[RMDB]
RNA sequence: GGGAACGACUCGAGUAGAGUCGAAAAGAUAUGGACCAUAUCAAGGAUGACCCACCUUUGAUCUCGGAAACGAGGGAGGUGCAUCCGUAGUAUGGUCCUAAGUCAAACGUGUAGUUCGCUACACGAACUCUACUUGUACCUUCGGGUACAAGUAGAGAAAAGAAACAACAACAACAAC
Reactivity to DMS in 0.01 (KOAc 150mM, MgCl2 10mM, bicine 150mM(pH8.5), 24C), signal-to-noise 5, nucleotides 027 to 126: g000a020u000a300u000g000g010a010c000c000a000u000a000u010c020a300a300g000g000a000u010g000a230c230c200c060a020c000c010u010u000u020g000a050u000c000u000c010g000g000a080a040a160c010g000a010g010g000g000a010g040g020u000g000c020a000u000c000c010g000u000a200g000u000a000u010g000g000u010c000c000u000a010a060g000u000c040a080a100a180c020g020u010g010u000a000g010u010u030c250g000c000u000a000c010a010c000g020a070a180
Reactivity to 2A3 in 0.01 (KOAc 150mM, MgCl2 10mM, bicine 150mM(pH8.5), 24C), signal-to-noise 3, nucleotides 027 to 126: g040a020u080a040u220g000g010a010c000c000a000u010a010u080c100a130a020g020g010a000u030g130a160c120c050c040a030c030c020u210u270u140g090a110u050c010u020c000g100g040a140a070a060c030g010a010g010g000g010a010g020g000u010g030c000a000u010c010c000g000u000a000g000u000a000u000g000g000u000c000c000u000a000a000g000u010c020a000a010a050c020g000u010g010u000a020g020u050u060c300g000c100u010a010c000a000c000g020a040a020